[RMDB]
An RNA of 170 nucleotides, treated with 2A3 and DMS and read out base by base. As a SHAPE reagent, 2A3 marks flexible, mostly unpaired nucleotides at the ribose 2'-OH. For 2A3 the reverse transcriptase was SuperScript II with manganese. DMS adducts were read by reverse transcription with MarathonRT. The data come from the RNA Mapping Database (RMDB), library 15KLIB. Conditions: 150 mM KOAc, 10 mM MgCl2 and 150 mM bicine (pH 8.5), 24 C.
RNA sequence: GGGAACGACUCGAGUAGAGUCGAAAAAAUUCACUGAAUUUGUUGGCACUCAAUCCGUUGACAUGUUAGCUGUCAAAACAGGCGUUGCUAUUGAACAGCUGCUUUAUGCGAUCCAACAACUGUAUACGAACUAAGCGGUUCGCCGCUUAGAAAAGAAACAACAACAACAAC
Reactivity to 2A3 in 0.01 (KOAc 150mM, MgCl2 10mM, bicine 150mM(pH8.5), 24C), signal-to-noise 8, nucleotides 027 to 129: a000a000u220u120c110a070c080u090g060a070a090u020u030u040g030u000u010g020g000c080a030c170u080c040a060a120u040c050c040g040u030u080g050a040c020a080u080g010u130u190a020g000c010u000g000u020c000a020a060a070a070c070a040g080g000c090g200u120u200g010c010u060a070u070u020g020a060a010c000a010g000c010u010g000c010u040u070u060a080u100g050c040g030a000u070c000c000a000a010c000a030a030c020u050g030u100a080u020a090c050g030a080a020
Reactivity to DMS in 0.01 (KOAc 150mM, MgCl2 10mM, bicine 150mM(pH8.5), 24C), signal-to-noise 9, nucleotides 027 to 129: a020a060u070u030c050a090c070u050g000a050a040u030u010u020g000u010u040g010g000c300a120c080u050c120a070a070u050c100c090g010u030u030g030a090c230a050u010g030u020u010a060g020c040u000g030u020c010a030a030a090a130c060a040g000g050c050g040u050u060g040c060u030a130u020u010g000a070a060c010a020g020c040u000g000c030u000u000u000a030u030g020c080g000a020u050c040c010a050a020c020a040a050c150u060g000u000a080u010a120c160g020a050a060